[RMDB]
The record gives the reactivity of an RNA of 177 nucleotides to DMS and 2A3.

RNA sequence: GGGAACGACUCGAGUAGAGUCGAAAAAGACCGCCCGGCCGACAGCGGCCGGGUAAGGGUGAAACGGUGGUGUAAGAGACCACCAGCGCCUCGGGUGACCGGGGCGGCUCGGUAAACCCCACCCGGAGGAUACUUAAAAAUUCGUUUUUAAGUAUCCAAAAGAAACAACAACAACAAC
Reactivity to DMS in 0.01 (KOAc 150mM, MgCl2 10mM, bicine 150mM(pH8.5), 24C), signal-to-noise 4, nucleotides 027 to 126: a120g010a060c040c010g000c020c000c000g020g010c010c000g030a180c300a290g010c060g010g030c020c000g050g000g010u000a000a020g000g010g020u000g000a050a060a070c100g000g010u000g000g000u000g000u000a090a120g000a300g010a050c010c000a010c000c000a020g010c020g000c010c000u000c010g000g000g000u060g000a180c000c000g000g000g000g010c010g000g000c000u000c080g010g010u020a070a140a150c120c000c020c100a110c060c000c010g010g010a300
Reactivity to 2A3 in 0.01 (KOAc 150mM, MgCl2 10mM, bicine 150mM(pH8.5), 24C), signal-to-noise 3, nucleotides 027 to 126: a000g050a010c010c000g080c020c000c010g030g020c050c010g100a170c070a200g270c140g060g020c010c000g020g000g010u000a000a000g000g010g000u020g020a070a040a020c030g000g000u010g000g000u010g000u010a020a000g000a000g010a010c000c000a000c000c000a000g000c000g000c000c000u000c000g000g010g020u120g050a100c000c000g000g000g010g000c000g000g000c000u000c010g020g000u050a100a100a080c010c000c000c000a030c010c010c000g080g010a020
The RNA was probed in 150 mM KOAc, 10 mM MgCl2 and 150 mM bicine (pH 8.5) at 24 C.